[RMDB]
RNA sequence: GGGAACGACUCGAGUAGAGUCGAAAAGCGCAUCCGCGCCUUGCCAGUGUCGAAGAUCGGAAUGGCGAAUUCCAGCUCGACCUGGGCUGUCGUUUCCGUCUUCUUCUCGUCGUCCUCAAUUUCCCGUUCCGUUUCAAAGCCGGUCAGGAUUUCGAGGUAUCAGCGUCAGAUUCGUCUGACGCUGAUAAAAAGAAACAACAACAACAAC
Reactivity to 2A3 in 0.01 (KOAc 150mM, MgCl2 10mM, bicine 150mM(pH8.5), 24C), signal-to-noise 1, nucleotides 027 to 156: g030c000g000c030a100u170c250c240g010c000g000c000c010u060u150g050c020c010a080g020u070g060u230c070g080a190a040g020a180u290c140g040g020a000a030u000g080g060c110g060a010a020u100u000c010c010a010g020c010u020c030g060a120c000c020u070g030g070g000c000u020g020u030c020g010u020u030u020c000c030g040u020c060u110u010c000u020u070c040u040c020g100u010c050g050u040c000c010u000c000a110a120u040u000u070c010c010c010g100u170u130c030c010g010u020u000u190c130a130a090a050g000c020c000g000g010u020c040a030g010g000a020u040u030u020c060g010a040g010g000
Reactivity to DMS in 0.01 (KOAc 150mM, MgCl2 10mM, bicine 150mM(pH8.5), 24C), signal-to-noise 1, nucleotides 027 to 156: g010c050g000c010a200u010c140c080g110c040g000c030c000u030u000g020c040c010a090g020u000g000u000c030g050a070a060g020a140u020c100g060g000a020a040u000g010g050c120g030a220a170u000u000c030c010a150g000c010u000c090g020a100c030c000u000g000g010g000c110u020g010u000c010g000u000u000u010c040c020g020u000c050u000u000c040u000u010c060u000c050g010u000c030g000u000c000c010u000c000a110a040u000u000u000c010c000c030g030u000u000c040c000g010u000u000u000c100a120a170a200g030c300c020g000g010u000c030a060g020g000a090u000u000u000c040g020a140g000g020
Overview: Structure probing data (2A3 and DMS) for a 207-nucleotide construct. For 2A3 the reverse transcriptase was SuperScript II with manganese. Values cover nucleotides 27 to 156. It was measured as part of the RMDB library OK3TST.